Overview:
Structure probing data (DMS and 2A3) for a 207-nucleotide construct. Source: RMDB library OK3TST, as collected in RNAgym. Conditions: 150 mM KOAc, 10 mM MgCl2 and 150 mM bicine (pH 8.5), 24 C.
RNA sequence: GGGAACGACUCGAGUAGAGUCGAAAAUAAGUAAAUUGUUGCAAUCAAUAGUUCACAAACACAAGGCUCAAGCCUCAUGUUUCUCUGAUUCCAAGGUCCAGACCCCUUGCUGUAUCCUACAGGGUCCUAUUGCUAAGUGCUUGAAUGUGCACAUGAAUGAUCCAUUUAAUUUCGAUUAAAUGGAUCAAAAAGAAACAACAACAACAAC
Reactivity to DMS in 0.01 (KOAc 150mM, MgCl2 10mM, bicine 150mM(pH8.5), 24C), signal-to-noise 3, nucleotides 027 to 156: u000a080a150g030u030a050a110a110u010u000g000u010u000g010c020a090a150u000c050a080a130u000a070g050u000u010c060a080c080a090a060a060c040a060c030a030a090g010g010c030u000c130a100a140g040c010c000u010c010a070u010g000u010u000u000c060u030c040u000g010a150u000u000c030c020a050a100g020g030u000c030c020a100g010a080c040c030c000c030u000u000g000c030u010g020u000a080u000c050c030u010a080c080a090g010g000g000u010c020c020u000a070u000u010g020c010u000a070a150g030u000g010c010u010u010g000a200a180u010g030u000g010c030a030c040a140u000g000a110a180
Reactivity to 2A3 in 0.01 (KOAc 150mM, MgCl2 10mM, bicine 150mM(pH8.5), 24C), signal-to-noise 2, nucleotides 027 to 156: u110a000a010g090u050a070a090a100u070u050g020u080u030g000c040a030a070u040c010a010a090u050a080g040u100u110c030a010c010a060a080a010c040a010c010a080a000g030g000c010u040c170a080a040g010c010c000u030c010a030u080g010u000u040u010c050u010c010u050g040a070u100u000c020c020a050a000g050g010u000c040c010a030g030a080c030c040c020c000u030u040g010c030u040g000u060a070u050c000c000u040a100c060a030g060g020g000u000c030c020u070a060u040u060g020c020u050a130a030g000u010g050c000u020u060g050a100a070u150g020u080g030c010a000c010a020u060g050a060a050